Notes:
This 177-nucleotide RNA was probed chemically with 2A3 and DMS. Reactivities are given for positions 27 through 126. 2A3 is a SHAPE reagent: it acylates the 2'-hydroxyl of flexible nucleotides of all four kinds. The DMS profile rests on 1,652 reads.
[RMDB]
RNA sequence: GGGAACGACUCGAGUAGAGUCGAAAAGAACGGGCAUGUGUUUUUGGCACAACCGCCGCUGUACAAACUCAAGUGGCAGCGCAGUGACCCGGAAUUCGCAUACUCCGACCGCGAGCGCGACGGUCUGUCGCCCUGACAUUUUCGAAUGUCAGGGCGAAAAAGAAACAACAACAACAAC
Reactivity to 2A3 in 0.01 (KOAc 150mM, MgCl2 10mM, bicine 150mM(pH8.5), 24C), signal-to-noise 4, nucleotides 027 to 126: g040a020a000c000g010g010g000c050a070u000g010u000g080u030u000u070u160u160g190g000c000a020c020a110a070c060c030g000c030c000g000c000u030g050u120a230c070a140a300a080c120u150c220a230a050g030u060g040g000c010a010g000c050g000c030a040g050u050g090a220c000c000c000g000g050a020a080u080u070c020g010c080a020u050a240c000u020c020c010g030a020c020c030g010c010g110a100g110c110g020c030g130a170c000g020g050u000c010u000g050
Reactivity to DMS in 0.01 (KOAc 150mM, MgCl2 10mM, bicine 150mM(pH8.5), 24C), signal-to-noise 2, nucleotides 027 to 126: g030a150a100c050g000g020g020c060a070u000g030u000g020u010u000u050u030u040g030g090c050a000c020a130a020c110c090g000c110c050g000c000u000g000u010a120c010a090a070a080c160u040c250a100a160g020u060g010g000c000a020g000c100g030c070a040g030u000g000a050c100c030c040g000g010a050a090u010u000c120g000c090a070u000a130c020u000c020c150g030a120c120c040g000c070g040a030g040c260g000c040g000a060c040g020g000u010c010u020g000